[RMDB]
RNA sequence: GGGAACGACUCGAGUAGAGUCGAAAAGGCUAGGUGGUAUUCCGGUGUGGGAUACUUGGUAAUAUGUAACGCUAAUAGCAUAAGAUUGUAGGACGGAAUUUACAGUCUUGGUUUUUAUAAACCUGAAAAAAGGAAUUACACUUCGGUGUAAUUCCAACUACUAUGAUCUGUUCGCAGAUCAUAGUAGAAAAGAAACAACAACAACAAC
Reactivity to DMS in 0.01 (KOAc 150mM, MgCl2 10mM, bicine 150mM(pH8.5), 24C), signal-to-noise 3, nucleotides 027 to 156: g000g030c050u000a100g010g020u000g000g020u000a050u000u000c020c030g030g000u010g050u000g010g000g010a060u000a020c030u000u000g000g000u000a090a120u000a090u000g030u000a080a100c090g030c050u010a070a090u010a160g000c050a120u000a030a060g000a040u010u020g010u000a050g020g010a140c050g000g010a100a300u000u000u010a020c030a050g010u010c010u010u000g010g000u000u000u000u010u000a110u000a130a040a030c010c000u020g000a000a000a040a110a120a150g020g010a040a030u000u000a010c000a020c000u000u010c300g050g060u010g010u000a010a030u000u000c010c010a010a060
Reactivity to 2A3 in 0.01 (KOAc 150mM, MgCl2 10mM, bicine 150mM(pH8.5), 24C), signal-to-noise 5, nucleotides 027 to 156: g050g010c050u030a030g060g040u030g020g020u090a070u060u050c050c020g110g060u160g030u140g040g050g010a030u050a080c020u050u080g030g020u090a070a080u060a100u180g080u080a090a020c040g000c040u040a060a040u030a170g020c010a030u020a110a030g010a030u030u040g010u020a020g030g060a020c080g020g030a070a030u080u100u030a020c010a010g020u010c000u010u030g010g000u020u030u000u010u030a150u130a040a050a030c000c020u020g080a100a000a000a010a010a040g000g000a000a000u000u000a000c010a000c010u040u120c270g070g000u000g000u000a000a000u000u000c000c000a000a000